[RMDB]
RNA sequence: GGGAACGACUCGAGUAGAGUCGAAAAAGCGCCGAGGUCGAUCUUCUCUUUAGCCUCCAUGACAGGGAUAACGAGACGGAUGCCGAGGUCGUUGGUCACGCCGUUGUGGAGUUCCUGCAGAGGUUUGCAUCGGUCGUCAGUUCGCUGACGACCGAUGAAAAGAAACAACAACAACAAC
Reactivity to 2A3 in 0.01 (KOAc 150mM, MgCl2 10mM, bicine 150mM(pH8.5), 24C), signal-to-noise 2, nucleotides 027 to 126: a000g050c020g000c020c030g000a010g000g040u030c010g040a040u000c030u000u070c000u050c000u090u090u060a000g000c000c000u030c010c020a120u140g040a140c050a020g000g000g060a060u050a090a080c040g000a040g030a070c040g040g000a060u010g050c010c000g030a010g030g190u110c020g060u010u020g020g000u060c000a030c180g050c000c010g040u030u040g060u030g100g070a180g030u050u030c000c040u000g050c020a010g030a040g030g000u030u120u200g000